[RMDB]
RNA sequence: GGGAACGACUCGAGUAGAGUCGAAAAUUGCUAUAUGAUGCACUGAUCCCAGCACUGACUGGGAGGAAGGCCUGGUUGGAAGCUUGGUUUUGACGUCAAGAAGUUUCUCCAUGGUUAAGGAAGCAGACAAGUCAAUACUUCCCUCUUGGAUGGUUGAUCCAGUACUCCUAUUCGUAGGAGUACUGGAAAAAGAAACAACAACAACAAC
Reactivity to DMS in 0.01 (KOAc 150mM, MgCl2 10mM, bicine 150mM(pH8.5), 24C), signal-to-noise 1, nucleotides 027 to 156: u000u000g030c020u000a210u020a090u030g030a150u020g020c080a120c030u000g000a200u000c000c000c010a020g000c060a160c150u000g020a150c000u000g010g000g040a030g010g010a080a080g020g030c000c010u000g010g010u010u000g000g000a110a190g000c030u000u000g000g050u020u000u000u010g020a110c060g010u010c070a060a110g020a120a080g010u010u010u000c010u070c000c000a050u020g010g010u000u010a150a030g010g030a030a040g010c000a070g020a300c110a040a070g020u000c040a040a150u010a040c050u000u000c000c000c000u000c110u000u020g010g000a040u000g000g000u010u000g000a200
Reactivity to 2A3 in 0.01 (KOAc 150mM, MgCl2 10mM, bicine 150mM(pH8.5), 24C), signal-to-noise 1, nucleotides 027 to 156: u040u020g000c000u000a000u000a000u300g090a040u010g060c030a030c080u080g000a040u000c000c000c000a000g010c040a110c260u300g220a080c020u010g030g000g040a010g020g010a120a040g000g070c000c060u050g000g030u160u170g040g020a010a000g000c010u000u000g040g040u150u160u180u160g100a020c020g010u100c000a000a020g040a080a050g000u000u020u020c010u000c030c000a100u170g000g050u000u060a030a060g080g040a120a000g000c000a020g080a080c030a000a120g020u160c030a020a010u020a150c020u000u070c000c000c000u080c030u020u100g040g120a100u140g030g060u060u080g030a050
Source: RMDB library OK3TST, as collected in RNAgym. Structure probing data (DMS and 2A3) for a 207-nucleotide construct. The DMS profile rests on 2,563 reads. 2A3 adducts were read by reverse transcription with SuperScript II with manganese.